[RMDB]
RNA sequence: GGGAACGACUCGAGUAGAGUCGAAAAUCCCAAGUCAGGGUGGAGGGGGCGGCAUCACUGAGCUCUCGGCGCCAUGGUGGCAGUAUGAGCUAUGGCGGCAGUGGAGAGCAGGCAGCCGACCUGCCCGGUAUUCCGUUACUUUCGAGUAACGGAAUACAAAAGAAACAACAACAACAAC
Reactivity to DMS in 0.01 (KOAc 150mM, MgCl2 10mM, bicine 150mM(pH8.5), 24C), signal-to-noise 4, nucleotides 027 to 126: u000c000c000c000a130a120g020u020c150a080g000g000g010u010g000g010a100g040g000g000g030g000c040g000g010c040a070u020c110a140c070u010g010a110g000c000u000c000u000c010g000g000c010g000c000c020a020u000g000g000u010g000g030c050a210g030u080a080u020g000a300g000c020u000a010u000g000g000c020g010g000c000a080g000u050g020g010a030g000a040g000c000a120g000g010c250a110g010c000c000g000a060c030c010u010g000c000c000c010g000
Reactivity to 2A3 in 0.01 (KOAc 150mM, MgCl2 10mM, bicine 150mM(pH8.5), 24C), signal-to-noise 8, nucleotides 027 to 126: u000c000c000c000a010a010g140u100c110a040g030g040g030u130g060g160a190g050g030g010g020g060c000g010g000c020a030u090c020a020c080u050g060a030g020c000u000c000u010c000g030g030c000g000c010c000a000u010g010g040u070g110g010c070a080g100u270a160u300g080a020g010c010u010a010u010g010g020c000g060g030c040a040g060u140g190g030a010g000a000g000c000a000g030g000c020a010g000c000c000g030a080c000c010u020g010c010c000c000g000
Structure probing data (DMS and 2A3) for a 177-nucleotide construct. The data come from the RNA Mapping Database (RMDB), libraries RFM100 and RFMREP. Values are in units of 0.01, from 0 to 300, in steps of 10. DMS adducts were read by reverse transcription with MarathonRT. For 2A3 the reverse transcriptase was SuperScript II with manganese.